[RMDB]
RNA sequence: GGGAACGACUCGAGUAGAGUCGAAAAAAGUUCGGGGUUAGCAAAGACUGAAGUGGAUCCAUACAUAAACUAGAUUUUUUGGCCACCCAACCCCGGAUCGCUGGACACGAAAUAGUUUGUGAGCACUUAUACAUCUCUGCUUCGGCAGAGAUGUAUAAAAAGAAACAACAACAACAAC
Reactivity to DMS in 0.01 (KOAc 150mM, MgCl2 10mM, bicine 150mM(pH8.5), 24C), signal-to-noise 1, nucleotides 027 to 126: a100a050g000u010u000c020g000g000g020g030u000u000a030g130c160a070a030a110g060a110c090u010g000a100a110g000u000g000g010a060u040c020c110a110u040a040c120a090u060a070a030a040c070u010a090g000a070u000u000u010u000u000u040g010g000c000c060a000c050c090c110a030a000c000c000c000c000g000g020a000u000c190g040c130u040g020g010a120c070a060c130g000a050a040a080u020a000g090u000u000u010g000u000g010a170g010c220a160c090u060
Reactivity to 2A3 in 0.01 (KOAc 150mM, MgCl2 10mM, bicine 150mM(pH8.5), 24C), signal-to-noise 2, nucleotides 027 to 126: a000a000g010u000u010c000g000g000g010g020u030u040a020g010c020a000a200a000g090a120c110u150g090a160a010g020u010g060g000a070u060c010c020a050u120a130c020a030u260a120a150a120c160u060a120g040a300u000u000u000u000u050u140g010g020c010c000a000c000c000c000a030a000c000c000c000c000g000g000a000u050c030g050c030u080g110g020a010c000a000c140g170a080a070a060u130a080g000u090u000u070g010u020g030a020g040c020a000c000u020
Chemical mapping of a 177-nucleotide RNA with DMS and 2A3. The reactions ran in a buffer of 150 mM KOAc, 10 mM MgCl2 and 150 mM bicine (pH 8.5), at 24 C. For 2A3 the reverse transcriptase was SuperScript II with manganese.